Chemical mapping of a 177-nucleotide RNA with DMS and 2A3. Source: RMDB library TTRDEL, as collected in RNAgym. For 2A3, 7,814 sequencing reads were counted. Conditions: 150 mM KOAc, 10 mM MgCl2 and 150 mM bicine (pH 8.5), 24 C. For DMS the reverse transcriptase was MarathonRT. Values cover nucleotides 27 to 126. The DMS profile rests on 2,861 reads.
RNA sequence: GGGAACGACUCGAGUAGAGUCGAAAAGAUAUGGAGGACGACAUGGAGACAUUCGGAAACGAAUGUACUCCAACAGCGUCCCUCCUAAGUCAAAACCUAAUACCUUGGUUCGCCAAGGUAUUAGGAACCAUGUUUUGAGGUUCGCCUCAAAACAUGGAAAAGAAACAACAACAACAAC
Reactivity to DMS in 0.01 (KOAc 150mM, MgCl2 10mM, bicine 150mM(pH8.5), 24C), signal-to-noise 3, nucleotides 027 to 126: g010a040u000a300u020g010g020a040g000g000a040c010g010a090c130a230u000g010g010a010g020a070c000a000u000u000c000g000g020a060a080a150c000g010a030a000u000g010u000a080c000u000c000c000a010a050c300a160g000c000g000u000c100c030c010u000c010c010u000a040a130g010u000c040a070a070a070a130c000c000u000a000a020u000a010c000c000u000u000g010g000u000u010c260g030c000c000a000a010g000g010u000a010u000u000a000g000g010a030a080
Reactivity to 2A3 in 0.01 (KOAc 150mM, MgCl2 10mM, bicine 150mM(pH8.5), 24C), signal-to-noise 2, nucleotides 027 to 126: g010a000u040a020u120g000g000a010g000g010a000c000g010a030c060a110u120g000g000a000g000a010c000a000u000u020c010g040g000a100a070a020c020g010a010a010u030g000u060a200c010u000c000c010a000a000c000a000g040c010g000u010c130c100c000u020c000c000u010a060a010g050u030c030a000a030a040a170c000c000u000a010a000u010a000c000c000u010u000g020g030u090u090c230g040c080c000a000a000g000g000u000a000u000u000a000g000g000a000a000